RNA sequence: GGGAACGACUCGAGUAGAGUCGAAAAUGUAGUGUUGAUUGGCGUGUUGAGAUUCGUGACUAGGUAUGAGCCGUUCCUGCGUCGUGGCAUCCCGAAUGUAUACACCAGCUAUCCGCAGGCACUGACAUCUGCCAACCGUAUUCGUACGGUUGGCAGAAAAAGAAACAACAACAACAAC
Reactivity to DMS in 0.01 (KOAc 150mM, MgCl2 10mM, bicine 150mM(pH8.5), 24C), signal-to-noise 1, nucleotides 027 to 126: u000g000u020a050g020u020g020u000u000g000a100u010u010g010g000c060g120u020g010u010u000g000a170g010a080u000u010c090g000u010g000a110c050u000a090g000g030u000a080u000g000a050g020c030c000g000u000u000c000c020u000g000c080g010u000c080g010u030g030g000c070a090u000c000c000c020g020a060a070u000g010u010a060u000a070c040a050c060c090a160g010c010u000a140u000c050c060g030c070a070g000g010c070a050c010u000g000a120c220a080